[RMDB]
RNA sequence: GGGAACGACUCGAGUAGAGUCGAAAACUUUCCUAGUCCGUAACGUUUCAGAUGUUGAGCUCUUGUUGAUGCAUAACAAGACUUAUGCUGCUGAGAUUGCUGGUAACGUCUCUGCUCGUAAGCGUGUUGAAAUUGUUGAAAAGGCUCGUGCUCUCGACUAAAUGCAUACCUUCGGGUAUGCAUUUAGAAAAGAAACAACAACAACAAC
Reactivity to 2A3 in 0.01 (KOAc 150mM, MgCl2 10mM, bicine 150mM(pH8.5), 24C), signal-to-noise 5, nucleotides 027 to 156: c030u120u100u080c010c030u030a050g070u060c050c040g090u110a070a130c050g000u030u040u000c030a030g010a060u050g050u140u080g030a020g000c070u010c000u080u010g030u040u040g110a170u170g090c110a060u090a180a020c020a050a000g020a010c000u020u020a070u130g040c050u010g000c000u030g020a020g000a100u090u180g010c050u040g010g060u050a080a010c000g020u000c000u000c000u030g030c000u010c010g020u030a080a090g020c020g050u060g050u020u020g020a070a120a110u030u070g010u020u000g090a130a140a070a030g060g020c030u030c080g150u150g000c030u000c010u020c020g040a020
Reactivity to DMS in 0.01 (KOAc 150mM, MgCl2 10mM, bicine 150mM(pH8.5), 24C), signal-to-noise 2, nucleotides 027 to 156: c070u000u000u000c000c030u010a140g030u010c080c020g020u000a060a080c090g020u010u010u030c030a090g010a100u000g010u000u010g010a070g020c040u010c000u000u000g030u010u010g010a140u010g040c150a090u010a040a050c040a090a020g010a080c030u000u000a030u010g020c050u000g030c010u010g000a030g010a060u010u010g070c040u000g000g010u000a070a140c010g040u000c010u000c010u000g000c010u000c000g050u000a020a070g030c010g000u010g010u000u010g000a040a140a110u000u000g000u010u010g020a090a070a080a120g000g030c060u000c060g030u010g010c120u000c010u000c030g020a300

This 207-nucleotide RNA was probed chemically with 2A3 and DMS. For DMS, 6,093 sequencing reads were counted. DMS adducts were read by reverse transcription with MarathonRT. Source: RMDB library OK3TST, as collected in RNAgym. The RNA was probed in 150 mM KOAc, 10 mM MgCl2 and 150 mM bicine (pH 8.5) at 24 C.